Background: This 170-nucleotide RNA was probed chemically with DMS and 2A3. The reactions ran in a buffer of 150 mM KOAc, 10 mM MgCl2 and 150 mM bicine (pH 8.5), at 24 C. The DMS profile rests on 2,507 reads. 2A3 adducts were read by reverse transcription with SuperScript II with manganese. DMS adducts were read by reverse transcription with MarathonRT.

RNA sequence: GGGAACGACUCGAGUAGAGUCGAAAAGAAGAGUCCGUAGCGAUAGGAGGGGAUGCUAGGAGUCGGCGGCGACCGAAGCGAGGAGGAAAGCAAAGAAAGCAACGGGGCUAGCGAGUGGAUGUUCCGCAUACCGCCACCUUCGGGUGGCGGAAAAGAAACAACAACAACAAC
Reactivity to DMS in 0.01 (KOAc 150mM, MgCl2 10mM, bicine 150mM(pH8.5), 24C), signal-to-noise 1, nucleotides 027 to 129: g000a070a110g020a070g000u020c020c010g040u080a080g000c100g170a090u000a080g000g000a140g070g000g010g000a090u020g000c180u000a090g020g030a030g020u090c030g000g040c300g040g000c210g000a100c020c000g000a130a060g050c270g100a060g000g000a070g120g020a040a030a060g000c290a150a030a050g040a050a090a050g000c100a100a110c160g000g020g000g010c090u040a100g040c030g040a090g000u010g000g030a040u080g000u110u060c120c010g040c080a100u000a030
Reactivity to 2A3 in 0.01 (KOAc 150mM, MgCl2 10mM, bicine 150mM(pH8.5), 24C), signal-to-noise 2, nucleotides 027 to 129: g080a040a020g050a000g020u000c060c010g020u010a010g010c010g140a110u090a040g000g000a000g000g020g030g000a020u100g030c000u060a000g000g040a070g010u110c080g010g020c000g020g000c030g020a090c100c000g000a000a000g040c120g000a000g000g000a050g000g010a090a000a010g030c040a000a050a110g110a090a080a000g050c020a000a010c080g030g000g060g000c030u000a000g030c050g010a010g000u030g020g010a060u100g030u070u000c000c000g020c000a030u070a090